[RMDB]
RNA sequence: GGGAACGACUCGAGUAGAGUCGAAAAUAACUCCUCCCGCGAGAGCCGCUAAGGUGGAAACGCUAUGCGGUACUGCCUGAUUGGGUGCUUGCGAGUGCCGCGGGAGGUCUCGUAGAAAAUAACCUAACAGUAUGGCUAGAUUCGUCUAGCCAUACUGAAAAGAAACAACAACAACAAC
Reactivity to 2A3 in 0.01 (KOAc 150mM, MgCl2 10mM, bicine 150mM(pH8.5), 24C), signal-to-noise 2, nucleotides 027 to 126: u120a010a010c010u020c030c000u000c010c000c020g000c010g010a030g010a010g010c010c000g000c040u060a160a100g000g010u040g010g010a060a090a020c010g020c010u040a020u160g010c000g000g010u030a070c020u010g010c020c000u170g050a230u130u210g030g000g010u010g020c010u040u110g000c010g000a020g020u010g000c030c020g010c020g000g000g000a000g000g000u000c000u000c000g000u030a020g220a020a140a040a060u170a040a070c040c060u050a070a030
Reactivity to DMS in 0.01 (KOAc 150mM, MgCl2 10mM, bicine 150mM(pH8.5), 24C), signal-to-noise 4, nucleotides 027 to 126: u000a100a170c140u010c000c000u000c000c010c000g040c010g020a020g000a300g030c020c010g000c000u010a070a090g010g010u010g010g010a110a080a080c000g030c010u000a300u000g010c000g000g030u000a100c010u000g010c010c010u000g000a140u000u030g020g000g020u010g000c000u000u000g010c020g000a030g010u000g000c000c000g020c020g010g000g010a010g000g000u000c000u010c010g000u010a190g010a080a070a080a110u010a130a120c080c040u000a120a210
Record summary
An RNA of 177 nucleotides, treated with 2A3 and DMS and read out base by base. DMS adducts were read by reverse transcription with MarathonRT. Source: RMDB library M2PK90, as collected in RNAgym. Conditions: 150 mM KOAc, 10 mM MgCl2 and 150 mM bicine (pH 8.5), 24 C.